RNA sequence: GGGAACGACUCGAGUAGAGUCGAAAACAAUCAACAAUAUGGUUCGUGUAGUUAUGCUGAAAAUCGUUGAGGUUGUAUGGAAUAGGUUAACCGUAAGACCUUAAGUUGAAAAACUUUAAAAUUAAUCAAAAUCAUGUACACUUCGGUGUACAUGAAACCGUUGAUAUGGGUUCGCCCAUAUCAACGGAAAAGAAACAACAACAACAAC
Reactivity to 2A3 in 0.01 (KOAc 150mM, MgCl2 10mM, bicine 150mM(pH8.5), 24C), signal-to-noise 2, nucleotides 027 to 156: c020a030a060u110c030a010a080c010a040a080u070a060u150g050g000u030u010c020g000u030g070u060a090g080u060u080a090u190g000c040u060g070a060a040a090a090u040c030g020u010u090g020a020g000g020u010u010g050u030a110u090g060g050a070a070u040a100g020g000u030u030a000a040c060c000g020u030a100a000g030a010c000c020u020u010a010a010g000u000u030g030a060a010a010a050a020c020u100u120u210a040a100a050a060u170u240a090a030u140c070a000a040a020a230u020c000a000u000g000u000a000c020a000c000u080u010c190g010g010u000g000u000a010c010a000u000g000a000a000a000

Structure probing data (2A3) for a 207-nucleotide construct. Reactivities are given for positions 27 through 156. It was measured as part of the RMDB library M2RFPK. Conditions: 150 mM KOAc, 10 mM MgCl2 and 150 mM bicine (pH 8.5), 24 C.